[RMDB]
RNA sequence: GGGAACGACUCGAGUAGAGUCGAAAAGCGCCUGCGUGACUUGGCGCAUGGGGGCCAGACGGUGCUCUCGGGCGUGACCGAAAGCCUGGUCAUCGAUCGCCUCCCGGACAAAGCAUGGCUGGUUGACCAUGCCUGCCACGUUCGCGUGGCAGGCAUGAAAAGAAACAACAACAACAAC
Reactivity to DMS in 0.01 (KOAc 150mM, MgCl2 10mM, bicine 150mM(pH8.5), 24C), signal-to-noise 1, nucleotides 027 to 126: g000c040g020c000c050u000g000c170g020u000g000a010c000u010u000g000g000c050g000c000a030u000g000g000g080g000g010c010c000a160g070a120c080g000g000u000g000c150u010c050u000c000g000g000g000c300g010u030g000a170c060c000g000a110a110a000g000c000c060u000g060g010u000c030a000u000c100g000a110u000c240g000c060c000u000c000c010c020g000g000a200c230a040a150a040g020c060a060u000g000g010c010u000g040g000u010u000g000a280c010
Reactivity to 2A3 in 0.01 (KOAc 150mM, MgCl2 10mM, bicine 150mM(pH8.5), 24C), signal-to-noise 1, nucleotides 027 to 126: g050c020g020c000c000u060g020c060g000u030g030a070c010u000u160g000g000c010g020c080a040u040g020g040g000g000g000c080c020a010g010a130c000g040g010u020g010c100u020c060u160c000g000g050g000c020g040u050g040a120c000c100g030a090a080a000g100c000c000u030g000g000u020c010a000u080c030g020a030u130c000g040c020c030u060c000c000c000g020g010a040c040a040a100a000g000c010a010u070g010g000c010u000g000g060u030u010g070a270c000
The record gives the reactivity of an RNA of 177 nucleotides to DMS and 2A3. Reactivities are given for positions 27 through 126. Reactivities are rounded to 0.1 and cut off at 0 and 3.